[RMDB]
RNA sequence: GGGAACGACUCGAGUAGAGUCGAAAAGGCAAAAAAGCUGGAAUAACCCUGCCAAGUCUUAGAAGCUUUAAGAUUCAUCGCAUUGAACUUGAUACGUAUAGUACAGCACCUUGAAAACAAAUCAUCUCAUUUGUACAGGUUUCGACCUGUACAAAUGAAAAGAAACAACAACAACAAC
Reactivity to 2A3 in 0.01 (KOAc 150mM, MgCl2 10mM, bicine 150mM(pH8.5), 24C), signal-to-noise 4, nucleotides 027 to 126: g060g000c110a190a200a000a010a000a000g030c020u030g010g020a080a100u200a200a130c030c010c010u020g020c020c010a070a020g010u000c000u050u110a070g040a130a010g060c010u040u060u110a040a050g020a090u040u070c010a030u060c080g000c050a060u060u130g030a070a040c020u010u050g010a000u040a090c020g030u100a060u070a230g070u010a010c010a020g010c020a040c010c020u040u110g120a050a030a000a010c090a030a120a090u150c040a080u040c020u010
Reactivity to DMS in 0.01 (KOAc 150mM, MgCl2 10mM, bicine 150mM(pH8.5), 24C), signal-to-noise 2, nucleotides 027 to 126: g030g020c000a000a020a090a040a030a040g000c070u000g000g010a170a120u040a180a100c040c000c000u010g000c060c050a050a130g000u000c040u030u020a090g000a060a090g000c020u000u000u000a090a040g000a060u050u000c040a030u060c090g020c020a090u000u010g000a030a050c060u000u000g010a110u010a050c080g020u010a070u000a060g000u000a060c030a120g020c010a080c060c050u000u050g000a110a030a070a040c160a000a050a050u000c080a120u020c080u000

The record gives the reactivity of an RNA of 177 nucleotides to 2A3 and DMS. For 2A3, 1,510 sequencing reads were counted. The RNA was probed in 150 mM KOAc, 10 mM MgCl2 and 150 mM bicine (pH 8.5) at 24 C. Reactivities are given for positions 27 through 126. DMS adducts were read by reverse transcription with MarathonRT.